RNA sequence: GGGAACGACUCGAGUAGAGUCGAAAAGCACGUCGUUACGACGACGUGCAAGAAACCGAAAGGAGUGGCGAGCUGCAGCCACAGUGAAUCAAAUGCAGCAAAAGCAUGGUGGUACGCCACCAUGCAAAGCUCCUCACUCAUUCGUGAGUGAGGAGCUAAAAGAAACAACAACAACAAC
Reactivity to 2A3 in 0.01 (KOAc 150mM, MgCl2 10mM, bicine 150mM(pH8.5), 24C), signal-to-noise 1, nucleotides 027 to 126: g020c010a000c020g010u010c000g000u000u060a020c260g000a000c030g000a000c040g050u000g000c010a000a000g000a000a090a000c030c040g080a050a060a060g100g120a200g030u000g000g030c030g000a020g040c000u000g030c000a050g130c000c000a000c020a000g060u080g300a000a010u070c050a030a000a060u140g000c020a000g000c000a080a000a000a000g000c000a000u000g000g070u050g000g000u080a050c230g060c000c000a000c000c000a000u000g010c000a000a000

Structure probing data (2A3) for a 177-nucleotide construct. Values cover nucleotides 27 to 126.